[RMDB]
RNA sequence: GGGAACGACUCGAGUAGAGUCGAAAAGAAAGCAUACCGUUAGGCUCAACAAGUGGGUUGAGUCGAUCCAGCACGCUGGCAUUGCAGUAAUUAACGUUGUCAAGAACAAGCCAAUGACCACUUUGCAGUGAACACACACUUUCGAGUGUGUGUUCACAAAAGAAACAACAACAACAAC
Reactivity to 2A3 in 0.01 (KOAc 150mM, MgCl2 10mM, bicine 150mM(pH8.5), 24C), signal-to-noise 1, nucleotides 027 to 126: g080a010a000a000g090c040a130u280a220c000c040g020u000u080a000g000g030c000u030c000a000a080c000a000a140g110u140g030g200g000u000u080g000a000g000u030c000g000a010u000c000c050a000g000c030a010c000g040c080u060g000g060c000a080u000u140g060c010a000g000u120a100a050u300u000a110a000c150g110u130u130g000u180c020a060a030g040a130a080c030a190a090g080c010c000a000a000u040g080a090c000c000a030c110u100u010u080g020c000a000
Reactivity to DMS in 0.01 (KOAc 150mM, MgCl2 10mM, bicine 150mM(pH8.5), 24C), signal-to-noise 1, nucleotides 027 to 126: g030a020a050a170g000c050a070u010a060c060c010g050u000u010a120g020g000c000u000c010a040a000c000a200a160g140u020g000g000g050u020u000g000a080g000u050c000g000a010u000c040c020a040g000c050a060c080g000c080u040g000g020c100a030u000u030g000c000a060g040u000a080a070u020u000a140a060c140g030u000u000g000u020c050a000a000g010a030a120c040a060a150g010c080c080a020a070u020g000a080c050c010a030c030u000u000u020g000c080a200